[RMDB]
RNA sequence: GGGAACGACUCGAGUAGAGUCGAAAAGCACACCACAGUGCCUGCUAUCACGGCAUUAUCGCCAGCGGUGCUGCCGUGAUGCGGUCUUCGCAAGGACCGCAACAUGAAGGUACGAUGCUUUUGUGUCACCACCUGUACGGUUCGCCGUACAGGUGGUAAAAGAAACAACAACAACAAC
Reactivity to 2A3 in 0.01 (KOAc 150mM, MgCl2 10mM, bicine 150mM(pH8.5), 24C), signal-to-noise 1, nucleotides 027 to 126: g010c010a040c010a000c090c010a060c010a050g000u000g000c020c000u060g020c000u020a010u050c010a010c010g020g000c010a000u060u020a020u040c030g000c060c070a100g180c020g030g010u010g030c010u040g000c030c010g000u000g000a010u030g000c010g020g000u000c000u110u120c130g150c190a080a100g010g000a000c000c000g000c010a010a040c060a080u130g030a050a010g010g030u000a000c050g060a070u060g040c040u070u020u040u070g130u020g010u050c040
Reactivity to DMS in 0.01 (KOAc 150mM, MgCl2 10mM, bicine 150mM(pH8.5), 24C), signal-to-noise 2, nucleotides 027 to 126: g000c000a040c120a140c200c020a270c120a200g000u000g000c000c000u010g000c050u000a160u010c020a040c000g000g030c010a020u000u000a010u000c000g040c070c100a290g000c050g000g020u000g000c110u000g000c010c010g010u000g000a020u000g030c000g000g000u000c000u010u010c300g000c300a150a100g000g000a020c000c000g030c000a000a100c140a090u000g010a040a020g010g080u000a010c000g010a050u000g000c040u020u010u040u000g020u000g010u000c080

This 177-nucleotide RNA was probed chemically with 2A3 and DMS.
For DMS the reverse transcriptase was MarathonRT.
For 2A3, 1,625 sequencing reads were counted.
The reactions ran in a buffer of 150 mM KOAc, 10 mM MgCl2 and 150 mM bicine (pH 8.5), at 24 C.